Annotation:
Structure probing data (2A3 and DMS) for a 177-nucleotide construct. The reactions ran in a buffer of 150 mM KOAc, 10 mM MgCl2 and 150 mM bicine (pH 8.5), at 24 C. Values are in units of 0.01, from 0 to 300, in steps of 10. High DMS reactivity at an A or C suggests that its Watson-Crick edge is free.
RNA sequence: GGGAACGACUCGAGUAGAGUCGAAAAGUAACUAUCGUCUUGAGUCCAACACGACUUAACGGGUUGGCAUGGAUUGUAGGCGCCGCCCUAUACCUUGUCUGCCUCCCCGCGGUGCAUGGAGCCGGGCUCCUCCGAUAAUCUUCGGAUUAUCGGAGGAAAAAGAAACAACAACAACAAC
Reactivity to 2A3 in 0.01 (KOAc 150mM, MgCl2 10mM, bicine 150mM(pH8.5), 24C), signal-to-noise 1, nucleotides 027 to 126: g040u030a000a140c070u050a040u080c030g080u050c040u030u120g030a030g060u000c010c010a070a000c060a030c070g170a060c010u120u120a110a040c050g000g040g000u030u090g010g000c020a050u060g030g040a060u030u210g010u030a000g020g000c090g120c110c070g000c060c030c020u030a010u020a070c000c000u040u090g040u080c060u040g060c000c010u000c010c000c000c000g000c010g000g040u030g000c060a110u090g000g030a030g000c060c000g050g030g000c000
Reactivity to DMS in 0.01 (KOAc 150mM, MgCl2 10mM, bicine 150mM(pH8.5), 24C), signal-to-noise 2, nucleotides 027 to 126: g020u000a070a140c070u000a030u000c080g000u000c020u000u000g020a060g010u010c020c070a050a090c110a090c100g020a170c130u000u010a100a120c120g010g010g010u000u010g000g000c030a070u000g000g000a060u000u000g000u010a020g000g010c070g000c120c100g000c090c010c040u000a050u000a050c040c030u000u000g020u000c050u000g010c010c010u000c050c000c040c080g020c060g000g020u000g020c040a050u030g000g020a140g010c080c100g000g010g000c200